The record gives the reactivity of an RNA of 177 nucleotides to DMS and 2A3. For DMS the reverse transcriptase was MarathonRT. The 2A3 profile rests on 1,548 reads. It was measured as part of the RMDB library OK1LIB. Values cover nucleotides 27 to 126. The DMS profile rests on 1,124 reads.
[RMDB]
RNA sequence: GGGAACGACUCGAGUAGAGUCGAAAAGGACACGAAUGCGUACUAGCGCUUCUUCUACGCUUUCUAGGGCCGAUCCACUACCCUCACUGCUUCCAGUCACGGAAAGGGCGCUCAGAAGAUCUGCUACCGGCAAAAUCGGAUUCGUCCGAUUUUGCCGAAAAGAAACAACAACAACAAC
Reactivity to DMS in 0.01 (KOAc 150mM, MgCl2 10mM, bicine 150mM(pH8.5), 24C), signal-to-noise 1, nucleotides 027 to 126: g020g020a170c100a000c090g000a070a120u000g040c060g070u060a090c250u000a090g000c210g010c050u010u000c030u000u000c140u020a090c070g000c030u000u000u060c020u040a150g010g000g000c040c080g110a170u000c050c000a070c190u000a030c030c000c000u010c000a000c070u000g000c080u000u010c010c010a040g050u000c000a180c010g000g000a020a040a180g000g000g020c090g060c170u030c130a040g000a000a060g000a020u000c050u000g000c000u000a000c050
Reactivity to 2A3 in 0.01 (KOAc 150mM, MgCl2 10mM, bicine 150mM(pH8.5), 24C), signal-to-noise 3, nucleotides 027 to 126: g030g020a040c030a010c110g050a080a020u190g000c010g000u030a140c040u080a120g000c060g020c070u130u070c010u020u000c020u040a070c000g020c000u040u110u050c060u100a010g080g030g010c010c020g010a010u030c020c020a020c020u050a090c000c020c010u050c010a030c030u080g020c020u090u040c090c010a040g030u040c030a050c140g020g050a070a100a120g040g010g000c020g010c020u040c000a100g020a150a030g000a150u000c030u050g050c010u060a060c030